[RMDB]
RNA sequence: GGGAACGACUCGAGUAGAGUCGAAAAGAUAUGGAGAUGUGUACCUUCAACAGCUCGGAAACGAGACAUGAAGUGUACCAUCUCCUAAGUCAAAAGCCGUUGAAACACUUCGGUGUUUCAACGGCAACAUGCCAUGAGUGUUCGCACUCAUGGCAUGAAAAGAAACAACAACAACAAC
Reactivity to DMS in 0.01 (KOAc 150mM, MgCl2 10mM, bicine 150mM(pH8.5), 24C), signal-to-noise 2, nucleotides 027 to 126: g010a030u000a300u010g000g010a000g020a020u000g010u000g050u000a000c010c000u000u010c000a000a080c300a200g010c010u000c000g010g000a100a100a290c000g000a020g000a000c100a170u000g000a020a000g010u000g000u000a000c010c000a010u000c020u000c000c000u020a010a050g010u000c030a130a080a110a150g020c010c010g010u000u000g010a000a000a010c000a010c010u000u010c200g040g010u010g020u000u000u000c000a000a040c020g000g000c030a010a030